About this RNA: This 177-nucleotide RNA was probed chemically with DMS and 2A3. Source: RMDB library OK2TRN, as collected in RNAgym. 2A3 is a SHAPE reagent: it acylates the 2'-hydroxyl of flexible nucleotides of all four kinds. Conditions: 150 mM KOAc, 10 mM MgCl2 and 150 mM bicine (pH 8.5), 24 C. DMS (dimethyl sulfate) methylates the pairing face of unpaired adenines and cytosines. For DMS the reverse transcriptase was MarathonRT.
RNA sequence: GGGAACGACUCGAGUAGAGUCGAAAAGCCGAUGCGCCAGACGCAUGCUCAUACAUUUAGCAUGCUGAAAUUUGGGCGGCGGCUGCCAUUGCGGUCGCGUUGACCCGCGGACGGCCCAGACGCUGCGGGCGUCUUAUGCGUUCGCGCAUAAGACGCCAAAAGAAACAACAACAACAAC
Reactivity to DMS in 0.01 (KOAc 150mM, MgCl2 10mM, bicine 150mM(pH8.5), 24C), signal-to-noise 2, nucleotides 027 to 126: g000c010c000g030a040u010g000c020g050c030c030a120g000a200c210g010c010a010u000g000c000u050c210a120u000a150c240a130u000u000u000a000g020c010a030u000g000c000u000g000a040a100a260u010u010u000g000g010g000c000g030g020c020g000g000c000u000g000c050c050a120u020u000g010c050g000g020u010c090g010c040g030u000u010g000a070c060c090c020g000c010g020g000a020c070g010g010c050c100c100a100g000a130c090g000c070u000g020c200g000
Reactivity to 2A3 in 0.01 (KOAc 150mM, MgCl2 10mM, bicine 150mM(pH8.5), 24C), signal-to-noise 1, nucleotides 027 to 126: g000c010c000g030a070u110g090c070g020c020c020a000g010a090c000g000c020a010u010g020c000u000c060a180u240a300c110a170u040u050u140a030g000c000a030u020g000c000u000g030a100a120a060u180u110u070g060g000g020c030g070g020c000g000g000c000u000g020c010c010a070u070u300g020c100g040g000u060c040g040c040g010u030u100g040a120c030c080c000g030c000g000g010a040c040g000g010c000c000c000a000g050a040c030g020c040u110g000c090g040